[RMDB]
RNA sequence: GGGAACGACUCGAGUAGAGUCGAAAAUCGAGAGGGAGUCCACUCUCGUAAAUCUAGGCUCAAAAAAAUAGAUGCAAACAACAUCGUACCUUUCGCUCGUAAAACUGCACCUGUUGCAGCAUAAAACACCUCUAAUUCAGGUUCGAGCGCUUACCGUCUAUUUUACCUGCUUCGGCAGGUAAAAUAGAAAAGAAACAACAACAACAAC
Reactivity to 2A3 in 0.01 (KOAc 150mM, MgCl2 10mM, bicine 150mM(pH8.5), 24C), signal-to-noise 3, nucleotides 027 to 156: u170c000g000a000g000a000g000g050g000a010g030u010c040c020a020c040u000c000u010c000g030u100a010a000a000u030c010u010a020g000g000c000u000c000a050a080a060a020a000a010a060u200a040g010a010u040g050c090a150a130a090c010a080a070c000a050u020c020g050u090a130c010c050u060u140u100c010g000c000u000c000g030u020a000a010a080a050c000u010g020c000a040c030c160u170g090u250u010g050c000a000g000c020a020u070a030a060a010a010c070a030c010c020u050c060u100a170a120u190u110c070a010g010g010u030u040c010g000a000g000c000g020c020u030u130a040c060c030g010u000
The data come from the RNA Mapping Database (RMDB), library RSTRND. Structure probing data (2A3) for a 207-nucleotide construct. Values are in units of 0.01, from 0 to 300, in steps of 10. For 2A3 the reverse transcriptase was SuperScript II with manganese. Values cover nucleotides 27 to 156.